[RMDB]
RNA sequence: GGGAACGACUCGAGUAGAGUCGAAAAGAUAUGGACGAGAGCGGAGGUGCCUCUGCUUCGUUUGACGGAUUUCGGAAACGAAAUCCCGAGAAGCAGAGGCACUCCCCACCCGUGAUCGUCCUAAGUCGUACACAAGAAGGUUCGCCUUCUUGUGUACAAAAGAAACAACAACAACAAC
Reactivity to DMS in 0.01 (KOAc 150mM, MgCl2 10mM, bicine 150mM(pH8.5), 24C), signal-to-noise 2, nucleotides 027 to 126: g010a080u000a300u000g000g030a050c000g010a060g000a300g000c020g020g030a120g050g000u000g000c030c000u000c000u010g040c010u000u000c000g000u000u020u020g000a170c300g000g000a010u000u020u000c010g040g010a070a100a160c000g010a040a020a020u000c020c000c030g020a040g020a020a020g030c000a020g020a030g020g000c000a000c020u000c010c010c020c040a300c060c000c010g030u000g000a300u000c000g010u030c000c000u030a020a080g000u000c070